[RMDB]
RNA sequence: GGGAACGACUCGAGUAGAGUCGAAAAGGGGUGUGUUCUGGUGUAUAAGAGAUGCCACCAAAUACUGCCUGUGCAUGGGAUUUUAUUACCAACCCAUGAGGGAGAGUGUCCUCUCCUACUGGUGGGCAGGAACCCUGAUGUCAGACUAAACCCCAGCCAAUUGCAAUUUGUUCGCAAAUUGCAAUUGAAAAGAAACAACAACAACAAC
Reactivity to 2A3 in 0.01 (KOAc 150mM, MgCl2 10mM, bicine 150mM(pH8.5), 24C), signal-to-noise 5, nucleotides 027 to 156: g000g010g010g000u050g010u020g040u090u080c030u020g020g020u040g040u020a200u060a250a030g100a010g000a020u030g010c010c000a020c010c020a010a040a030u150a030c070u110g070c040c060u120g050u080g030c010a010u000g030g000g000a030u070u130u070u190a210u170u190a130c060c040a030a080c020c000c000a000u010g030a080g010g020g000a000g000a000g010u250g150u150c060c010u010c000u000c010c000u010a060c060u030g030g020u040g030g100g000c010a010g010g020a020a030c000c010c000u010g010a020u050g010u010c010a010g010a020c010u050a090a100a080c000c000c000c000a010g050c030
Reactivity to DMS in 0.01 (KOAc 150mM, MgCl2 10mM, bicine 150mM(pH8.5), 24C), signal-to-noise 1, nucleotides 027 to 156: g000g020g010g020u000g030u010g020u000u000c030u010g000g000u010g030u000a070u000a090a130g030a170g010a110u000g010c030c010a050c050c020a030a050a120u000a120c040u010g040c020c010u000g020u010g020c000a030u000g020g010g020a240u010u000u000u010a120u020u010a190c050c000a120a120c000c000c020a020u000g000a230g000g000g010a020g000a080g020u020g010u000c190c010u000c000u020c000c020u000a000c060u020g020g000u000g000g030g000c030a010g030g000a050a090c020c020c000u010g000a130u000g010u000c010a000g010a050c050u000a030a060a110c000c000c000c010a100g020c060